[RMDB]
RNA sequence: GGGAACGACUCGAGUAGAGUCGAAAAUCAUUGAGAUGCUGGGCGCUAUGGUCGUCCUCCUCCGGCUGACCUCCUUCUCAGCUGCUGACCGGCGCCGCACAGGCGGCCUCUCAGCUUCGUGUGCAAAAAAAGAAUGGUCGGUUCGCCGACCAUUCAACAUCCAUAGAGGCUUCGGCCUCUAUGGAUGAAAAGAAACAACAACAACAAC
Reactivity to 2A3 in 0.01 (KOAc 150mM, MgCl2 10mM, bicine 150mM(pH8.5), 24C), signal-to-noise 1, nucleotides 027 to 156: u100c000a010u020u140g060a050g020a080u080g040c070u100g010g020g000c020g030c040u110a180u300g040g020u100c030g000u030c040c000u050c000c010u010c000c070g050g000c030u010g020a070c010c040u110c010c000u180u060c030u000c010a010g020c000u040g000c040u040g000a020c000c000g000g010c000g000c000c000g000c030a060c000a090g050g000c010g040g050c020c020u050c000u020c030a010g010c000u100u140c070g090u050g030u040g050c090a060a030a000a000a000a000a100g000a000a000u010g000g000u000c000g010g030u060u070c120g000c060c000g010a020c000c000a000u000u010c010a000a000
Reactivity to DMS in 0.01 (KOAc 150mM, MgCl2 10mM, bicine 150mM(pH8.5), 24C), signal-to-noise 1, nucleotides 027 to 156: u000c060a150u010u000g010a060g000a050u010g000c010u010g030g000g030c000g050c040u000a040u010g040g010u000c020g000u000c040c030u000c010c010u000c050c010g050g000c000u010g010a060c040c060u020c100c060u000u000c080u000c010a080g050c040u010g050c110u000g000a050c040c000g000g010c000g030c000c010g000c070a060c070a050g010g000c030g090g010c000c020u000c050u000c060a100g020c040u000u000c080g000u000g030u000g020c040a000a000a090a070a070a100a210g030a000a000u000g000g020u020c000g020g020u000u000c300g050c010c000g020a010c020c000a000u000u000c000a100a160
The data come from the RNA Mapping Database (RMDB), library M2RFPK.
Structure probing data (2A3 and DMS) for a 207-nucleotide construct.
For DMS, 2,500 sequencing reads were counted.
Values are in units of 0.01, from 0 to 300, in steps of 10.
Reactivities are given for positions 27 through 156.
The reactions ran in a buffer of 150 mM KOAc, 10 mM MgCl2 and 150 mM bicine (pH 8.5), at 24 C.